[RMDB]
RNA sequence: GGGAACGACUCGAGUAGAGUCGAAAAUUCCAUUUGAGUAUCCUGAAAACGGGCUUUUCAGCAUGGAACGUACAUAUUAAAUAGUAGGAGUGCAUAGUGGCCCGCAUAGCAGGCAUUAACAUUCCUGAAAACGUGAAAAGGUUCGCCUUUUCACGAAUCUAGAACUCAAGUUCGCUUGAGUUCUAGAAAAAGAAACAACAACAACAAC
Reactivity to DMS in 0.01 (KOAc 150mM, MgCl2 10mM, bicine 150mM(pH8.5), 24C), signal-to-noise 2, nucleotides 027 to 156: u000u000c010c000a120u000u000u010g030a090g020u000a120u000c030c010u020g000a060a070a150a120c070g030g000g040c110u010u000u020u000c060a190g010c110a060u000g000g000a060a080c050g010u020a120c040a140u000a170u010u000a120a080a220u000a080g010u000a070g000g000a140g020u000g000c030a080u010a120g000u010g000g000c010c000c030g020c050a110u000a150g030c000a000g000g020c070a030u000u000a100a040c020a130u000u000c010c000u000g000a040a020a090a150c000g000u000g000a000a010a060a010g010g040u000u000c300g010c030c000u000u000u000u000c000a020c020g000a010a040
Reactivity to 2A3 in 0.01 (KOAc 150mM, MgCl2 10mM, bicine 150mM(pH8.5), 24C), signal-to-noise 3, nucleotides 027 to 156: u030u030c000c000a030u070u050u030g080a070g060u100a040u150c000c010u040g040a020a000a000a100c020g010g000g050c010u160u100u070u090c050a030g000c030a030u060g050g020a120a010c050g060u110a030c060a030u160a090u180u300a130a120a110u210a060g110u050a040g030g040a040g020u000g020c010a060u100a190g050u040g030g020c000c040c010g060c010a030u140a020g020c000a010g000g010c000a000u020u010a010a020c010a020u020u040c000c000u010g040a080a070a070a060c000g000u010g030a020a020a040a000g010g010u000u040c080g090c000c000u000u010u000u000c000a000c000g000a000a020
Structure probing data (DMS and 2A3) for a 207-nucleotide construct. Reactivities are given for positions 27 through 156. The reactions ran in a buffer of 150 mM KOAc, 10 mM MgCl2 and 150 mM bicine (pH 8.5), at 24 C.